[RMDB]
RNA sequence: GGGAACGACUCGAGUAGAGUCGAAAAGGUAGUGCGAGUCGUAUGACCGGCCUUUUGCGACGAGUCCGAUGCUGUUUGGCCGGUAUUAGCAUCAAGGACGAGGCUGCGAAGCAGUCGAGCACUACGAGGGAAGCUCGGAGUUCGCUUCGAGUUUCCCAAAAGAAACAACAACAACAAC
Reactivity to 2A3 in 0.01 (KOAc 150mM, MgCl2 10mM, bicine 150mM(pH8.5), 24C), signal-to-noise 9, nucleotides 027 to 126: g100g000u000a000g000u010g010c020g030a030g020u000c010g010u080a090u110g050a020c000c010g000g010c000c010u090u130u130u210g030c010g000a010c010g020a010g010u000c000c000g000a010u010g000c040u050g050u200u120u080g020g000c000c000g000g000u000a010u000u120a000g000c000a000u010c020a020a110g000g000a000c000g000a020g010g000c010u000g000c050g070a130a030g000c000a000g000u010c010g030a010g000c000a000c000u000a000c000g000a060
Reactivity to DMS in 0.01 (KOAc 150mM, MgCl2 10mM, bicine 150mM(pH8.5), 24C), signal-to-noise 8, nucleotides 027 to 126: g010g000u000a000g010u000g010c000g010a140g010u010c010g030u010a070u020g000a060c010c000g000g000c010c020u010u020u020u020g010c020g000a020c030g000a180g000u000c000c010g010a020u000g000c010u010g010u010u010u010g000g000c000c000g000g010u010a020u010u020a030g000c000a020u010c020a130a120g010g000a020c010g010a140g000g000c000u000g010c000g010a120a120g010c000a020g000u000c010g010a150g000c000a010c000u000a010c010g010a150